Conditions: 150 mM KOAc, 10 mM MgCl2 and 150 mM bicine (pH 8.5), 24 C. Chemical mapping of a 177-nucleotide RNA with DMS. It was measured as part of the RMDB library OK2TRN. DMS adducts were read by reverse transcription with MarathonRT.
RNA sequence: GGGAACGACUCGAGUAGAGUCGAAAACAGAACUUCACGUUUACUCAAGCCACUACAGGUAAUCAAGCCGCCCAGGUUUUAGGCACUUAUGGCCCUGAACAAAUACCACAAAUUCAAUUAGACACCACGUUAAAACCAGGUUCGCCUGGUUUUAACGAAAAGAAACAACAACAACAAC
Reactivity to DMS in 0.01 (KOAc 150mM, MgCl2 10mM, bicine 150mM(pH8.5), 24C), signal-to-noise 2, nucleotides 027 to 126: c080a160g000a020a120c090u000u010c180a100c130g010u010u000u000a130c100u020c040a070a200g000c030c010a040c020u000a080c120a080g000g020u000a030a020u020c100a070a050g010c020c040g030c050c020c030a120g010g000u000u000u000u000a000g010g040c110a080c160u010u000a090u020g000g020c030c060c020u020g010a060a050c090a020a030a090u000a020c040c060a040c120a050a030a120u020u040c080a030a080u010u000a140g000a100c030a050c120c080a150